[RMDB]
RNA sequence: GGGAACGACUCGAGUAGAGUCGAAAAACUAGUAUGUACAGGGGUGAGUUGACCUGUCAUCUAGACUGCUGACCAUCAACUCACCGGUCAGCUGUAUGAUGUCCACAGAGUACGACAUCAGUACUCAGAGUAAGCAUGCGUUCGCGUAUGUUUACUCAAAAGAAACAACAACAACAAC
Reactivity to 2A3 in 0.01 (KOAc 150mM, MgCl2 10mM, bicine 150mM(pH8.5), 24C), signal-to-noise 9, nucleotides 027 to 126: a000c010u020a010g070u140a060u070g060u090a010c000a010g040g030g040g050u140g090a110g050u060u070g090a080c000c020u000g000u000c000a000u000c000u010a020g070a100c040u040g000c010u000g000a000c010c010a030u100c030a030a090c050u030c080a050c020c040g000g010u010c000a010g000c000u000g000u000a040u060g090a040u060g040u040c020c020a070c050a090g040a010g040u040a020c050g090a030c090a160u120c040a050g010u010a010c010u010c050a010
Reactivity to DMS in 0.01 (KOAc 150mM, MgCl2 10mM, bicine 150mM(pH8.5), 24C), signal-to-noise 9, nucleotides 027 to 126: a290c020u000a020g000u040a010u010g000u040a000c010a010g000g000g000g010u010g000a070g020u000u010g000a060c020c020u000g000u000c000a000u000c010u000a020g000a160c050u000g000c010u000g000a010c010c080a160u030c090a030a040c090u010c070a070c140c120g000g000u000c020a020g000c000u000g010u000a060u030g000a070u010g000u010c010c040a120c200a110g000a040g010u000a030c050g010a120c140a090u040c110a090g000u000a020c020u000c020a170